[RMDB]
RNA sequence: GGGAACGACUCGAGUAGAGUCGAAAAAACAAAUUGCUUGUGUUUGUUGAUUGGUCUUAUUGUUAACAAGCUACGUUAGAACUGAGUCAGGCUGUUCUAAAAGAGUUCUACUGACUCGCAUCGUUAGAGUUUGAGUUAUGUAUUGUAACGGUGUUAACUGUACAGUAUUCUUCGGAAUACUGUACAGAAAAGAAACAACAACAACAAC
Reactivity to DMS in 0.01 (KOAc 150mM, MgCl2 10mM, bicine 150mM(pH8.5), 24C), signal-to-noise 2, nucleotides 027 to 156: a030a040c010a040a020a050u010u010g020c050u000u000g030u000g000u000u000u000g000u000u000g010a240u000u010g000g010u010c080u010u000a110u010u010g010u000u010a030a030c020a010a040g010c020u000a110c060g010u000u000a020g010a050a050c030u000g010a100g020u010c040a060g000g000c070u000g000u010u000c040u000a050a040a060a110g010a210g000u000u010c080u000a050c060u010g000a020c000u000c060g020c050a030u000c020g010u000u000a080g010a050g020u000u000u010g010a160g010u000u010a070u000g000u000a050u000u000g010u000a020a040c040g010g010u000g010u000u000a060a140
Reactivity to 2A3 in 0.01 (KOAc 150mM, MgCl2 10mM, bicine 150mM(pH8.5), 24C), signal-to-noise 6, nucleotides 027 to 156: a010a010c030a010a010a010u040u070g000c000u010u000g000u000g010u040u010u010g040u040u010g090a230u050u200g060g050u060c060u120u210a210u110u240g050u080u160a060a000c010a000a010g000c010u020a010c030g020u010u010a010g000a050a000c000u020g000a010g020u010c000a000g020g060c040u020g010u010u010c000u020a010a040a000a000g030a030g080u110u010c060u130a080c000u010g000a000c000u010c060g000c000a010u000c010g000u010u020a030g010a050g110u040u110u200g130a100g050u160u190a120u220g120u060a070u070u080g100u020a000a010c010g000g020u000g000u030u050a060a100
The record gives the reactivity of an RNA of 207 nucleotides to DMS and 2A3.
DMS adducts were read by reverse transcription with MarathonRT.
High DMS reactivity at an A or C suggests that its Watson-Crick edge is free.
It was measured as part of the RMDB library RSTRND.
Reactivities are given for positions 27 through 156.